[RMDB]
An RNA of 177 nucleotides, treated with 2A3 and DMS and read out base by base. DMS adducts were read by reverse transcription with MarathonRT. It was measured as part of the RMDB library RFM100.
RNA sequence: GGGAACGACUCGAGUAGAGUCGAAAACUUUUUAGCCAUUGCUAUUUGCUUAGAAACAGAACUGGAACUGUUAUAGCGGUUCAACUCCUCUUGUAGGAUCUUCUUCCCUUUUUUGAAGGUCUUAUCUAAUCGUAUAGGACUUCGGUCCUAUACGAUUAAAAGAAACAACAACAACAAC
Reactivity to 2A3 in 0.01 (KOAc 150mM, MgCl2 10mM, bicine 150mM(pH8.5), 24C), signal-to-noise 6, nucleotides 027 to 126: c040u070u080u010u070u130a010g010c020c040a100u060u170g020c020u060a070u110u130u120g030c010u080u090a070g110a090a050a020c030a010g080a080a030c090u200g050g040a040a060c000u000g080u130u080a110u100a080g060c010g010g040u070u070c040a060a040c050u030c040c000u040c010u060u090g030u050a010g010g000a000u000c000u010u000c010u020u040c000c000c000u070u110u040u010u080u110g010a000a010g000g010u000c000u000u050a060u020c040u030
Reactivity to DMS in 0.01 (KOAc 150mM, MgCl2 10mM, bicine 150mM(pH8.5), 24C), signal-to-noise 1, nucleotides 027 to 126: c010u010u010u020u010u010a070g000c050c080a150u040u090g000c070u000a020u000u000u020g000c050u050u000a040g000a020a070a020c060a050g010a050a030c040u000g040g000a050a020c040u040g030u000u010a060u060a090g000c000g000g000u030u000c080a020a050c110u020c000c030u010c090u000u000g020u000a040g000g000a010u010c020u000u000c000u000u030c010c020c040u000u000u020u000u020u010g000a000a000g000g000u000c000u020u010a040u050c220u020